[RMDB]
RNA sequence: GGGAACGACUCGAGUAGAGUCGAAAAGUGCACGACUUCGGUCGUGCACAAAUAAAGGCAGUCGAGUGCGUACGGCACAGUCAUAGGCUGACGCCACGACAAAAAGUAACGUCUUCGGACGUUACAACGGUUUUUAAUUCUUCGGAAUUAAAAACCGAAAAGAAACAACAACAACAAC
Reactivity to 2A3 in 0.01 (KOAc 150mM, MgCl2 10mM, bicine 150mM(pH8.5), 24C), signal-to-noise 2, nucleotides 027 to 126: g000u000g020c000a000c000g010a000c020u050u100c280g070g010u000c010g010u010g000c020a010c000a010a010a000u000a000a000a000g170g030c070a030g010u020c020g040a020g040u230g050c000g020u060a240c040g030g000c020a040c010a260g170u120c030a140u160a140g070g000c000u020g010a010c000g000c000c030a060c040g000a020c050a020a100a000a010a030g030u020a000a000c000g000u010c000u010u060c130g070g010a010c000g000u000u000a000c000a010a010
Reactivity to DMS in 0.01 (KOAc 150mM, MgCl2 10mM, bicine 150mM(pH8.5), 24C), signal-to-noise 2, nucleotides 027 to 126: g060u000g010c020a000c000g020a010c000u000u030c160g040g020u010c000g000u010g060c020a000c000a030a070a030u010a130a090a090g020g010c150a050g010u000c020g030a080g000u000g000c000g000u010a120c030g000g000c010a110c130a090g010u000c190a080u030a160g000g010c050u000g000a060c040g020c000c010a230c030g000a010c050a020a100a070a120a070g010u000a020a010c000g000u000c000u000u010c250g010g010a010c000g010u000u000a000c000a040a140
Chemical mapping of a 177-nucleotide RNA with 2A3 and DMS. It was measured as part of the RMDB library M2PK50. The DMS profile rests on 1,082 reads. Values cover nucleotides 27 to 126. The reactions ran in a buffer of 150 mM KOAc, 10 mM MgCl2 and 150 mM bicine (pH 8.5), at 24 C. DMS adducts were read by reverse transcription with MarathonRT.